[RMDB]
RNA sequence: GGGAACGACUCGAGUAGAGUCGAAAAUUAACUAAGGAGGUGCAACAUGCUAAGAUGUCCAGAUUGUCAAUCCAUUUUAGGUGAUAUAAAGCAAUCCAAAGAGUUCGACGCUAUUGGGGAACUUCUAGUAAAGAUCAAAUGUGAAAACUGUAAGGCAUCACCUGACAUGUUUCGACAUGUCAGGUGAAAAAGAAACAACAACAACAAC
Reactivity to DMS in 0.01 (KOAc 150mM, MgCl2 10mM, bicine 150mM(pH8.5), 24C), signal-to-noise 1, nucleotides 027 to 156: u020u000a050a120c080u000a110a300g010g010a060g010g070u020g000c050a160a120c030a040u020g010c050u000a000a130g000a090u000g040u000c070c100a100g030a090u010u010g010u000c070a090a130u000c040c000a140u010u000u000u000a060g020g010u000g010a100u000a140u000a040a060a140g010c000a020a060u020c000c010a050a080a120g000a140g000u000u000c050g010a060c050g000c050u030a060u000u000g000g040g000g000a050a150c070u000u000c030u000a060g000u000a050a120a030g010a030u000c060a030a060a050u000g000u000g040a060a090a010a050c010u000g050u000a140a040g000g000c000a150
Reactivity to 2A3 in 0.01 (KOAc 150mM, MgCl2 10mM, bicine 150mM(pH8.5), 24C), signal-to-noise 1, nucleotides 027 to 156: u100u040a020a000c010u040a070a060g020g000a010g030g150u070g000c020a040a030c000a040u140g060c000u040a010a010g010a040u050g020u000c040c050a010g010a070u060u110g120u060c070a050a040u050c030c010a040u010u010u090u150a010g060g020u040g070a040u000a010u020a130a090a000g060c000a000a040u050c040c070a050a010a030g040a020g050u020u060c040g000a000c010g000c030u010a020u070u140g000g000g020g010a040a000c000u010u010c000u010a010g020u080a130a110a000g000a010u020c040a050a050a030u090g030u040g050a020a050a100a050c010u020g020u140a040a000g030g000c010a030
An RNA of 207 nucleotides, treated with DMS and 2A3 and read out base by base. Values are in units of 0.01, from 0 to 300, in steps of 10. 2A3 adducts were read by reverse transcription with SuperScript II with manganese. Values cover nucleotides 27 to 156. DMS (dimethyl sulfate) methylates the pairing face of unpaired adenines and cytosines.